[RMDB]
RNA sequence: GGGAACGACUCGAGUAGAGUCGAAAAAAGAACUCUCCCCUACUUAAUAGACGGAUGAUUGAAAAAGGACCUUGCUAAGUGAGUCCUUUGGUCAGAGGCCCCAUGGACAUCUUCAACUUGCACAGAACACUACAUCAGUAUUCGUACUGAUGUAGUGAAAAGAAACAACAACAACAAC
Reactivity to 2A3 in 0.01 (KOAc 150mM, MgCl2 10mM, bicine 150mM(pH8.5), 24C), signal-to-noise 3, nucleotides 027 to 126: a000a010g110a090a040c010u010c000u000c050c010c000c000u030a050c010u060u190a140a160u050a150g060a040c030g040g030a050u080g020a050u100u140g080a110a100a020a040a030g000g010a010c000c050u010u040g020c080u140a080a040g070u030g070a030g010u010c000c050u010u010u020g000g010u030c010a010g020a030g100g020c020c000c010c020a020u050g020g000a010c010a060u000c050u020u010c010a050a060c020u010u050g010c080a050c010a030g060a120a000
Reactivity to DMS in 0.01 (KOAc 150mM, MgCl2 10mM, bicine 150mM(pH8.5), 24C), signal-to-noise 6, nucleotides 027 to 126: a080a080g000a100a130c070u000c040u000c010c000c000c030u000a060c090u010u010a070a090u000a090g000a080c080g000g010a080u000g010a080u000u020g000a050a070a040a030a030g010g000a030c040c030u000u000g020c100u010a080a080g010u000g000a130g000u000c010c000u000u000u000g010g010u000c050a060g010a100g020g010c040c020c010c040a060u010g000g000a060c070a040u000c040u000u010c060a040a040c050u000u000g010c050a090c160a120g010a070a130